[RMDB]
RNA sequence: GGGAACGACUCGAGUAGAGUCGAAAAGAUAUGGACCCUGCUUUUGACGCUUUAAUAUCGGAAACGAUAUCCAAGCGAUAAGCUGGGUCCUAAGUCAAAGCACCACGGGGUUCGCCCCGUGGUGCAAGCACUAAAUGAUCUUCGGAUCAUUUAGUGCAAAAGAAACAACAACAACAAC
Reactivity to 2A3 in 0.01 (KOAc 150mM, MgCl2 10mM, bicine 150mM(pH8.5), 24C), signal-to-noise 1, nucleotides 027 to 126: g000a010u010a000u030g000g000a000c000c000c010u020g010c030u140u050u120u300g300a170c170g000c030u010u020u030a060a040u000a010u020c000g010g020a040a010a020c010g000a000u010a010u010c040c040a010a000g020c090g180a130u020a030a000g000c000u000g020g000g020u000c000c000u020a000a000g000u010c020a190a000a000g010c000a000c050c000a000c040g060g000g000g000u080u140c280g140c000c050c040c030g030u000g030g000u010g010c010a010a000
Reactivity to DMS in 0.01 (KOAc 150mM, MgCl2 10mM, bicine 150mM(pH8.5), 24C), signal-to-noise 1, nucleotides 027 to 126: g010a000u000a120u000g000g010a010c000c000c000u000g000c000u000u010u000u000g050a160c080g010c000u000u000u000a060a020u000a010u000c000g020g000a030a040a080c010g040a050u000a000u000c080c160a010a000g050c010g010a070u000a000a010g010c020u000g000g000g020u000c000c000u000a000a060g000u000c030a080a140a150g030c000a000c010c010a010c020g020g000g000g000u000u040c300g000c010c000c000c010g010u010g000g000u000g010c010a000a010

Source: RMDB library TTRDEL, as collected in RNAgym. Structure probing data (2A3 and DMS) for a 177-nucleotide construct. The DMS profile rests on 1,583 reads. The reactions ran in a buffer of 150 mM KOAc, 10 mM MgCl2 and 150 mM bicine (pH 8.5), at 24 C. For DMS the reverse transcriptase was MarathonRT. Reactivities are given for positions 27 through 126.